[RMDB]
RNA sequence: GGGAACGACUCGAGUAGAGUCGAAAAACGCUCAAAGCACAGUUAGAAAUGCUGAAGCAACACAAAGGCAUUAACGACACCAUUUCGCAGCAACGAAAAUCGCUAUGGGCUACCGAAGCGCAAAUCCAGGUAUUAGAGGAAGCGCAAGGGAAACGUAUAUGAACUAAGGGUUCGCCCUUAGUUCAUAAAAAGAAACAACAACAACAAC
Reactivity to 2A3 in 0.01 (KOAc 150mM, MgCl2 10mM, bicine 150mM(pH8.5), 24C), signal-to-noise 2, nucleotides 027 to 156: a000c040g000c010u000c030a050a050a010g000c030a040c080a070g040u070u080a050g020a120a050a010u020g000c050u040g040a110a050g140c080a060a100c040a020c020a130a110a000g000g000c000a020u020u090a100a050c020g070a010c000a050c060c020a020u000u060u000c020g000c120a190g000c030a100a090c000g040a000a010a030a090u090c050g000c010u010a060u130g000g000g000c010u030a040c030c000g090a140a040g040c000g000c010a000a100a030u060c000c000a020g170g010u140a090u070u140a160g130a130g160g000a060a020g000c000g000c010a030a050g020g000g000a030a040a020c070g060u090a030
Reactivity to DMS in 0.01 (KOAc 150mM, MgCl2 10mM, bicine 150mM(pH8.5), 24C), signal-to-noise 1, nucleotides 027 to 156: a050c030g030c000u010c050a050a080a080g000c040a000c030a120g010u020u000a100g050a150a090a140u000g000c000u010g030a200a190g000c040a050a050c110a150c100a090a040a220g020g000c070a050u010u000a000a030c000g020a040c070a120c040c030a060u010u000u000c050g000c040a100g000c110a120a090c020g020a000a020a100a290u000c030g000c010u000a040u000g030g000g040c030u000a080c030c000g060a130a110g000c000g000c000a060a090a090u000c000c050a070g000g040u000a160u010u000a130g000a100g010g000a100a180g010c060g020c090a070a140g000g020g000a070a040a000c060g030u000a110

An RNA of 207 nucleotides, treated with 2A3 and DMS and read out base by base.
Reactivities are given for positions 27 through 156.
For DMS the reverse transcriptase was MarathonRT.
It was measured as part of the RMDB library OK3TST.
The DMS profile rests on 1,675 reads.
For 2A3 the reverse transcriptase was SuperScript II with manganese.
For 2A3, 910 sequencing reads were counted.